[RMDB]
RNA sequence: GGGAACGACUCGAGUAGAGUCGAAAAUGCCAACCUCUUUGAGAUGGCAAGUCCUGCCGAAGUCCAUAGCCGAAAACCCGAUCUCAUCUAUGCCUAUGGGGUAGAAGAUGGCAAGCAGGGCACCGCGUGGGUAUCACAGGUUCGCCUGUGAUACCCAAAAAGAAACAACAACAACAAC
Reactivity to DMS in 0.01 (KOAc 150mM, MgCl2 10mM, bicine 150mM(pH8.5), 24C), signal-to-noise 1, nucleotides 027 to 126: u040g010c010c000a030a100c140c000u000c040u060u020u040g000a020g070a080u000g000g040c000a030a170g010u000c000c000u040g050c040c150g000a230a180g000u000c050c050a050u000a130g010c050c050g020a110a070a050a050c000c050c030g020a040u010c120u000c030a020u000c070u000a120u010g000c080c010u000a090u050g050g050g010g050u000a030g000a050a000g050a030u000g000g050c080a150a060g000c050a110g000g020g000c010a180c070c030g000c120g030
The data come from the RNA Mapping Database (RMDB), library OK2TRN. Structure probing data (DMS) for a 177-nucleotide construct. The reactions ran in a buffer of 150 mM KOAc, 10 mM MgCl2 and 150 mM bicine (pH 8.5), at 24 C. DMS (dimethyl sulfate) methylates the pairing face of unpaired adenines and cytosines. Values cover nucleotides 27 to 126.